[RMDB]
Structure probing data (DMS and 2A3) for a 177-nucleotide construct.
RNA sequence: GGGAACGACUCGAGUAGAGUCGAAAAAACAGAGUUGUCCCCGGCGAGAGUACAUAUCGACCCGGGGGCUUGCUACCUCGAUGUCGGCUCUCCCCAUCCUGGCCGUGCAGCAGCGGCCAAGGGUGAGGAGACUAAACAGUUUCGACUGUUUAGUCUCAAAAGAAACAACAACAACAAC
Reactivity to DMS in 0.01 (KOAc 150mM, MgCl2 10mM, bicine 150mM(pH8.5), 24C), signal-to-noise 9, nucleotides 027 to 126: a080a040c080a120g010a080g010u010u010g010u000c000c000c000c000g000g000c010g000a300g000a030g030u010a140c280a120u030a080u000c010g000a300c300c010c000g000g000g000g000g000c000u000u010g000c030u000a060c160c020u010c010g000a030u040g010u000c010g010g000c110u000c030u000c000c020c010c010a010u000c000c000u000g000g000c000c010g010u000g010c110a110g010c200a160g000c010g000g000c000c000a010a010g010g010g010u000g000a070g000
Reactivity to 2A3 in 0.01 (KOAc 150mM, MgCl2 10mM, bicine 150mM(pH8.5), 24C), signal-to-noise 9, nucleotides 027 to 126: a000a000c130a030g110a040g050u080u060g010u030c000c000c000c000g000g000c010g000a040g000a010g020u130a120c060a180u250a080u060c010g010a030c000c000c000g000g000g000g000g000c000u010u060g000c000u020a050c030c020u000c000g020a030u230g000u000c000g010g040c040u000c020u020c020c000c000c000a010u010c000c000u000g000g000c000c010g040u070g030c130a220g050c040a020g000c120g000g000c000c000a010a010g000g000g000u000g000a020g050
Conditions: 150 mM KOAc, 10 mM MgCl2 and 150 mM bicine (pH 8.5), 24 C. For DMS the reverse transcriptase was MarathonRT. Reactivities are given for positions 27 through 126.